RNA sequence: GGGAACGACUCGAGUAGAGUCGAAAACAUAAUCCUUGUUUAGCCAAAAGGCGUAGAUAACAAGUUCAUUAACAAGAAAAGCAAAGAGUCUCUUAACGGUUAAGAGCAUAGGGCACUUUACCUCUGAGUUUAUGAGCUUUUUCGAAAGCUCAUAAACAAAAGAAACAACAACAACAAC
Reactivity to 2A3 in 0.01 (KOAc 150mM, MgCl2 10mM, bicine 150mM(pH8.5), 24C), signal-to-noise 7, nucleotides 027 to 126: c030a040u170a060a050u180c050c000u000u010g000u010u010u020a010g000c000c000a070a200a090a170g010g000c010g090u130a020g040a090u060a030a000c010a010a000g020u060u100c050a050u060u180a030a050c040a060a060g150a120a100a010a010g070c060a060a090a010g070a050g050u000c010u010c000u070u100a130a050c130g130g000u050u060a040a010g020a000g000c000a020u140a070g090g030g000c020a020c060u070u070u070a050c000c010u030c020u010g040a060
Reactivity to DMS in 0.01 (KOAc 150mM, MgCl2 10mM, bicine 150mM(pH8.5), 24C), signal-to-noise 4, nucleotides 027 to 126: c100a050u020a070a030u000c180c010u010u000g010u010u000u010a050g010c000c000a070a110a240a130g040g000c040g000u030a060g010a060u020a020a020c020a020a040g000u000u000c160a030u010u030a080a160c190a080a060g000a070a080a030a060g000c130a030a060a060g000a130g030u060c020u000c010u000u000a050a110c180g020g030u020u000a020a030g010a020g010c070a050u000a040g000g010g000c030a090c030u000u000u000a070c090c030u000c020u000g000a300